Chemical mapping of a 177-nucleotide RNA with 2A3 and DMS. Reactivities are given for positions 27 through 126.

[RMDB]
RNA sequence: GGGAACGACUCGAGUAGAGUCGAAAACGCGCGGUGCGGAUAUAUUGCGCCGUCAUCACCUCGGUCAUCGAGGCGCGGGUCAUCCGCGCGAUAUAACCCAUGCCAUAGAGCGCGAUGGUCAGCACCGAGUCUCAUUCCUAUUCGUAGGAAUGAGACUAAAAGAAACAACAACAACAAC
Reactivity to 2A3 in 0.01 (KOAc 150mM, MgCl2 10mM, bicine 150mM(pH8.5), 24C), signal-to-noise 8, nucleotides 027 to 126: c050g040c010g000c020g020g010u020g010c040g030g010a010u080a010u020a010u130u080g020c000g010c010c000g080u020c010a050u070c020a030c010c010u020c030g060g080u170c100a160u200c090g030a030g030g000c000g000c020g000g040g010u210c040a110u100c030c020g000c000g000c010g020a000u030a010u010a090a020c020c020c010a020u080g010c010c000a120u150a110g060a020g020c010g000c010g010a010u020g000g010u030c020a000g010c010a010c000c010g010
Reactivity to DMS in 0.01 (KOAc 150mM, MgCl2 10mM, bicine 150mM(pH8.5), 24C), signal-to-noise 4, nucleotides 027 to 126: c070g000c110g000c010g010g030u000g020c040g000g000a040u010a040u030a040u010u020g020c000g010c000c040g030u030c060a060u010c080a100c050c020u000c040g000g000u020c210a090u030c040g000a080g000g010c050g030c110g000g000g010u030c210a140u020c030c050g000c020g000c070g000a060u010a070u020a060a110c030c040c030a050u000g020c060c080a120u010a100g020a190g000c010g000c000g000a040u000g000g010u000c050a060g010c040a060c020c020g000
For 2A3 the reverse transcriptase was SuperScript II with manganese.